[RMDB]
RNA sequence: GGGAACGACUCGAGUAGAGUCGAAAAAGCUUUUUUUCUUGUGACAUCAUCACAGAACGAAGAUGGUGACAGCAGCAGGGCCACAAAACAGUCCCCAGUCUACCCAGUUGCUCAUGGCUGUGGUUUGCAAUAUCAUAUUUUUCGAAAUAUGAUAUUGAAAAGAAACAACAACAACAAC
Reactivity to DMS in 0.01 (KOAc 150mM, MgCl2 10mM, bicine 150mM(pH8.5), 24C), signal-to-noise 9, nucleotides 027 to 126: a090g020c040u000u000u000u000u000u000u000c010u000u010g030u000g000a090c130a110u010c180a120u000c010a040c050a060g010a060a060c300g000a050a050g010a060u000g010g020u000g010a070c070a060g000c050a040g010c060a060g000g010g010c030c040a040c090a040a040a060a080c140a090g000u000c020c010c010c050a070g010u000c050u000a100c030c010c020a070g010u000u000g010c070u000c100a090u010g000g010c020u000g010u000g020g010u000u010u000g010
Reactivity to 2A3 in 0.01 (KOAc 150mM, MgCl2 10mM, bicine 150mM(pH8.5), 24C), signal-to-noise 7, nucleotides 027 to 126: a000g110c130u230u120u060u030u020u030u040c060u120u160g040u040g030a030c010a080u090c010a020u020c010a060c030a100g120a140a030c090g090a100a050g020a060u050g020g020u020g020a040c040a040g030c010a000g010c010a010g050g010g000c020c020a030c040a030a090a060a010c020a030g090u050c010c000c000c000a000g030u010c020u020a040c010c000c010a030g020u080u080g030c040u050c070a060u130g050g000c010u020g030u060g080g020u060u080u120g020